[RMDB]
RNA sequence: GGGAACGACUCGAGUAGAGUCGAAAACGUAUUGCUGGAACGACUCAACGCCCUCCACGCUGCUUGUCUUAAUGCCAAAAUUAAGGAACAUAUAAAUCAAAGAGGCGCAUUCCAGGCAGCCAGAGCACGUAAUUUAAAUCUUCGGAUUUAAAUUACGAAAAGAAACAACAACAACAAC
Reactivity to DMS in 0.01 (KOAc 150mM, MgCl2 10mM, bicine 150mM(pH8.5), 24C), signal-to-noise 5, nucleotides 027 to 126: c110g010u000a090u000u010g010c030u010g010g010a060a080c070g000a090c050u000c070a070a130c130g000c020c020c000u000c030c060a080c210g010c070u000g020c070u000u000g020u000c040u000u000a020a030u000g010c070c170a060a100a120a080u010u010a050a040g000g000a060a070c080a070u010a080u000a050a070a080u010c050a030a100a110g010a070g000g020c050g000c060a060u000u000c090c030a040g010g010c030a030g010c050c080a070g010a090g010c160a140
Reactivity to 2A3 in 0.01 (KOAc 150mM, MgCl2 10mM, bicine 150mM(pH8.5), 24C), signal-to-noise 4, nucleotides 027 to 126: c040g040u080a100u100u190g020c040u050g010g050a100a020c010g060a050c020u020c070a070a050c050g030c020c000c000u000c020c010a050c060g000c020u020g000c010u020u040g010u040c010u030u070a030a020u040g050c050c040a110a150a080a120u130u060a100a050g070g020a080a010c020a010u200a000u070a170a160a030u130c080a020a120a020g080a060g070g000c050g020c050a010u080u000c010c000a010g020g000c000a000g000c010c010a030g010a020g080c050a020
An RNA of 177 nucleotides, treated with DMS and 2A3 and read out base by base. It was measured as part of the RMDB library OK2TST.